This 177-nucleotide RNA was probed chemically with DMS and 2A3.

RNA sequence: GGGAACGACUCGAGUAGAGUCGAAAAGGAAGCGCUUCAUGACGAUCGACUUGCCCACAUAGGCUUCGGCGACGAUCAGGGCAUCGACGUCGAGAUCGUGAUUGUUUUCAGCGUUUGCAAUCGCCGAGGUAAUGCACUACUUCGGUAGUGCAUUACCAAAAGAAACAACAACAACAAC
Reactivity to DMS in 0.01 (KOAc 150mM, MgCl2 10mM, bicine 150mM(pH8.5), 24C), signal-to-noise 2, nucleotides 027 to 126: g000g000a070a070g000c030g000c040u000u010c060a060u000g000a060c020g000a080u000c010g010a070c140u000u020g000c010c000c030a170c180a140u000a080g000g030c030u010u000c010g000g000c020g000a080c000g010a070u000c080a210g020g020g010c090a040u000c040g000a070c040g000u000c020g020a030g000a090u010c030g000u020g000a070u000u000g000u010u000u010u010c180a040g010c020g010u000u000u030g000c060a140a090u000c060g010c010c020g010a100
Reactivity to 2A3 in 0.01 (KOAc 150mM, MgCl2 10mM, bicine 150mM(pH8.5), 24C), signal-to-noise 3, nucleotides 027 to 126: g040g010a030a020g020c020g010c000u090u080c060a050u080g060a010c030g060a090u020c030g100a130c120u040u110g010c020c120c000a130c060a130u270a050g020g020c000u030u000c010g010g010c000g010a030c010g020a030u030c160a130g110g090g020c070a010u010c020g060a060c040g000u020c000g010a010g020a000u000c020g050u030g060a100u070u160g090u090u120u030u080c070a000g000c000g020u000u060u050g100c020a010a090u060c030g040c110c000g000a020
Description: For 2A3 the reverse transcriptase was SuperScript II with manganese.